[RMDB]
RNA sequence: GGGAACGACUCGAGUAGAGUCGAAAAAUGCCUGUAAUCUCAGCGACUUGGGAGGCUGAGGUGGGAGGAUUGCUUGAGCCCAGGGCUGCAGUGAUUGCGGCACUACACUCCAGCAUGAGUGACAAAGAAUACAACACUUCUUCGGAAGUGUUGUAUUAAAAGAAACAACAACAACAAC
Reactivity to 2A3 in 0.01 (KOAc 150mM, MgCl2 10mM, bicine 150mM(pH8.5), 24C), signal-to-noise 2, nucleotides 027 to 126: a000u100g020c020c000u050g110u110a030a050u020c000u000c000a000g010c000g120a100c090u100u140g080g080g020a060g100g000c040u020g010a010g000g030u040g050g050g020a020g000g010a050u020u100g030c020u000u070g020a030g000c020c050c050a010g030g030g000c010u000g000c000a040g030u060g180a160u250u080g000c000g020g000c010a000c010u040a010c010a010c000u020c010c010a020g010c020a110u100g090a020g110u080g020a010c080a010a150a010g110
Reactivity to DMS in 0.01 (KOAc 150mM, MgCl2 10mM, bicine 150mM(pH8.5), 24C), signal-to-noise 7, nucleotides 027 to 126: a100u010g020c000c000u000g020u000a130a050u000c020u000c020a020g020c030g010a130c070u010u010g020g010g020a150g000g010c020u000g000a020g010g020u000g010g010g010a070g010g010a090u000u000g000c030u010u000g010a060g010c050c120c100a060g000g010g010c010u000g010c020a020g010u010g010a160u000u000g010c010g000g010c000a050c040u000a110c220a090c010u000c010c090a080g010c070a080u000g010a160g010u000g010a100c180a070a110a120g000